[RMDB]
RNA sequence: GGGAACGACUCGAGUAGAGUCGAAAAGCGCCAUACUGAAGCGAGUAAAAGAGACCGUCCCCGACACGGUCGUGCUGGCGAAUACCGGGGUGUGUCUGGAAAACGUCGAGGAGCAGCUCUGCAUUGCCACGGAUCGUCGUUUCGACGACGAUCCGUGAAAAGAAACAACAACAACAAC
Reactivity to 2A3 in 0.01 (KOAc 150mM, MgCl2 10mM, bicine 150mM(pH8.5), 24C), signal-to-noise 1, nucleotides 027 to 126: g040c000g000c000c000a090u070a090c050u080g050a050a040g070c020g040a000g140u170a030a170a110a000g090a000g020a020c050c040g030u070c010c000c000c000g010a020c010a000c080g000g010u000c020g000u000g010c050u140g090g030c000g000a020a120u070a200c040c000g000g000g000g050u000g000u000g020u000c030u080g070g020a090a050a050a070c080g000u070c000g030a120g050g050a090g010c030a010g000c000u000c020u120g010c030a090u010u150g030c050
Reactivity to DMS in 0.01 (KOAc 150mM, MgCl2 10mM, bicine 150mM(pH8.5), 24C), signal-to-noise 1, nucleotides 027 to 126: g000c080g000c020c000a020u040a040c030u000g010a120a220g000c060g000a090g050u000a200a110a130a150g000a070g000a080c000c000g000u000c080c000c030c000g030a110c250a080c010g000g000u000c110g000u000g010c000u000g010g000c000g000a050a120u000a000c010c040g000g000g030g000u000g000u000g080u000c040u030g000g020a110a030a120a090c000g010u060c040g010a100g000g000a090g000c020a200g000c080u000c000u010g000c060a050u010u050g030c200
The data come from the RNA Mapping Database (RMDB), library OK1LIB. Chemical mapping of a 177-nucleotide RNA with 2A3 and DMS. The 2A3 profile rests on 894 reads.